[RMDB]
RNA sequence: GGGAACGACUCGAGUAGAGUCGAAAACAUGAAAAGUGCAAAAGGUGCAUUUCUGAAAUAGAGGUACCCAUUGAUUAUCAGACACAACCCAAAGAGGACAUAGAGAUGAUAUCUGUCCCUGAUAAUCGUGUCAGCAACAAUUCGUUGUUGCUGACACAAAAGAAACAACAACAACAAC
Reactivity to DMS in 0.01 (KOAc 150mM, MgCl2 10mM, bicine 150mM(pH8.5), 24C), signal-to-noise 1, nucleotides 027 to 126: c130a070u010g010a030a060a070a140g000u000g020c080a130a050a120a050g010g010u000g000c020a060u000u010u000c010u000g000a010a140a140u010a000g000a090g000g020u020a050c010c010c120a080u000u000g000a040u000u000a000u000c010a030g010a140c140a130c100a040a140c060c010c000a050a030a070g000a300g000g010a040c020a000u000a110g000a100g000a130u000g010a090u000a220u010c060u000g000u000c000c000c000u000g000a020u000a010a030u000c040
Reactivity to 2A3 in 0.01 (KOAc 150mM, MgCl2 10mM, bicine 150mM(pH8.5), 24C), signal-to-noise 1, nucleotides 027 to 126: c020a030u080g090a100a010a100a100g060u090g030c070a010a170a060a000g050g020u030g000c020a080u090u120u040c010u000g110a210a110a020u170a060g050a030g080g000u030a030c000c000c050a050u020u090g030a000u020u030a000u020c010a000g100a050c010a000c020a160a140c000c020c000a010a080a000g100a040g000g020a000c010a000u170a050g100a020g020a080u200g060a060u060a050u210c020u000g020u000c000c000c000u010g010a020u010a010a030u040c040
Chemical mapping of a 177-nucleotide RNA with DMS and 2A3. The DMS profile rests on 697 reads.